[RMDB]
The record gives the reactivity of an RNA of 177 nucleotides to DMS and 2A3. The reactions ran in a buffer of 150 mM KOAc, 10 mM MgCl2 and 150 mM bicine (pH 8.5), at 24 C.
RNA sequence: GGGAACGACUCGAGUAGAGUCGAAAAAGGCUAGGAGCUAGCAGUCGGCUGUCGGCUCGAACCGAAUGGGCUAGCAGCGAGGUCAGCACUGCUAGUCUUGUGGCUUUAGCAGUCAGCAGCUACUGAGGGCGCGGGCUUGGUUCGCCAGGUUUGCGCCAAAAGAAACAACAACAACAAC
Reactivity to DMS in 0.01 (KOAc 150mM, MgCl2 10mM, bicine 150mM(pH8.5), 24C), signal-to-noise 9, nucleotides 027 to 126: a040g000g000c010u000a060g010g000a050g010c020u000a040g010c010a020g010u000c070g010g010c000u000g000u010c030g010g000c000u000c030g010a090a130c060c060g010a260a050u020g000g000g000c000u000a040g010c000a010g000c050g000a140g010g010u020c070a050g020c070a120c000u000g000c000u000a000g000u010c000u000u000g000u020g000g010c070u000u010u000a100g020c080a020g010u000c010a080g010c030a030g000c010u000a070c030u000g010a180g010
Reactivity to 2A3 in 0.01 (KOAc 150mM, MgCl2 10mM, bicine 150mM(pH8.5), 24C), signal-to-noise 7, nucleotides 027 to 126: a000g020g000c010u020a010g050g030a020g020c010u020a010g010c000a000g010u020c020g020g000c000u010g010u030c000g010g000c000u000c020g020a060a030c010c000g040a090a140u180g000g010g000c010u010a000g000c000a000g010c010g040a040g010g060u080c020a010g020c030a010c000u000g000c000u000a000g000u040c000u000u040g030u020g010g000c000u020u030u040a040g010c030a010g030u050c010a020g010c010a010g000c010u040a020c010u020g030a070g050
Record summary: For 2A3 the reverse transcriptase was SuperScript II with manganese.